RNA sequence: GGGAACGACUCGAGUAGAGUCGAAAAGGGGUCUGUCGGAUAAGGUCUUGGAUUUACGUCUGAGGUGAUACUGAAGCCUCCACGGUAUCACUACCCACCAGACGUUGUCAGACCGUAACGACAGACGGAGGCACCCAAACCGUCGUUCGCGACGGAAGAUGCAUGCUUAGUUCGCUAAGCAUGCAUCAAAAGAAACAACAACAACAAC
Reactivity to 2A3 in 0.01 (KOAc 150mM, MgCl2 10mM, bicine 150mM(pH8.5), 24C), signal-to-noise 5, nucleotides 027 to 156: g010g000g030g010u000c000u010g000u000c000g000g020a030u030a080a060g020g020u030c140u300u300g150g000a070u190u180u220a010c000g000u000c000u010g000a000g000g010u000g000a000u000a000c000u020g010a040a000g000c000c000u000c000c000a010c010g010g000u000a000u000c000a000c000u050a080c070c090c020a050c010c000a000g000a000c010g000u000u010g000u000c030a030g010a020c000c000g000u000a030a000c000g010a000c000a000g000a000c000g000g000a000g000g000c000a030c010c000c000a040a080a070c000c000g010u010c000g020u070u090c300g000c010g130a000c000g000g010a010a040
Reactivity to DMS in 0.01 (KOAc 150mM, MgCl2 10mM, bicine 150mM(pH8.5), 24C), signal-to-noise 2, nucleotides 027 to 156: g010g010g030g020u000c010u000g060u020c010g040g040a120u000a090a200g020g000u000c000u000u000g050g010a110u000u000u000a020c080g020u010c010u020g000a210g040g000u000g000a030u000a010c000u000g020a040a170g000c020c000u000c000c030a300c080g020g010u020a000u000c010a000c020u000a040c000c020c060a300c080c000a010g010a040c020g010u010u000g060u000c010a070g000a040c000c010g010u010a030a230c020g020a070c000a000g020a020c000g000g010a050g010g000c010a140c000c000c000a050a100a150c010c000g010u000c000g010u030u010c270g020c000g010a020c000g000g000a010a050